Chemical mapping of a 177-nucleotide RNA with 2A3 and DMS. The data come from the RNA Mapping Database (RMDB), library M2PK50. Values cover nucleotides 27 to 126.
RNA sequence: GGGAACGACUCGAGUAGAGUCGAAAAGGUUCGCACUUCGGUGCGAACCAAAGGCUAAGCAAUAAAUAUCUGCUUGUUCGCUAAGCCACUAACGAGCAGAAAAAACCGUUUGGUUCGCCAAACGGAAGAUAUGAAAAACGUUCGCGUUUUUCAUAUCAAAAGAAACAACAACAACAAC
Reactivity to 2A3 in 0.01 (KOAc 150mM, MgCl2 10mM, bicine 150mM(pH8.5), 24C), signal-to-noise 2, nucleotides 027 to 126: g020g000u000u010c010g030c020a000c010u030u070c250g110g010u000g000c000g000a000a000c000c010a000a000a010g010g000c030u090a020a030g040c020a060a140u100a240a130a050u190a210u050c010u000g000c000u000u000g010u020u040c010g000c030u060a070a020g020c020c010a040c050u040a000a020c010g030a000g010c000a000g000a130a040a010a000a000a010c010c000g000u010u000u010g030g000u010u040c160g040c030c000a010a000a000c020g020g000a010a010
Reactivity to DMS in 0.01 (KOAc 150mM, MgCl2 10mM, bicine 150mM(pH8.5), 24C), signal-to-noise 2, nucleotides 027 to 126: g000g040u000u000c000g010c000a010c000u000u020c170g010g040u020g010c020g020a000a020c000c010a010a030a060g000g010c090u000a030a140g030c050a120a050u010a080a080a120u010a120u000c000u000g020c020u000u000g000u020u000c200g020c050u000a090a090g000c030c080a100c090u010a050a030c010g000a020g000c000a010g020a020a070a050a070a130a100c000c000g000u000u000u000g010g010u000u000c210g000c010c000a000a010a000c000g000g010a010a030
The RNA was probed in 150 mM KOAc, 10 mM MgCl2 and 150 mM bicine (pH 8.5) at 24 C.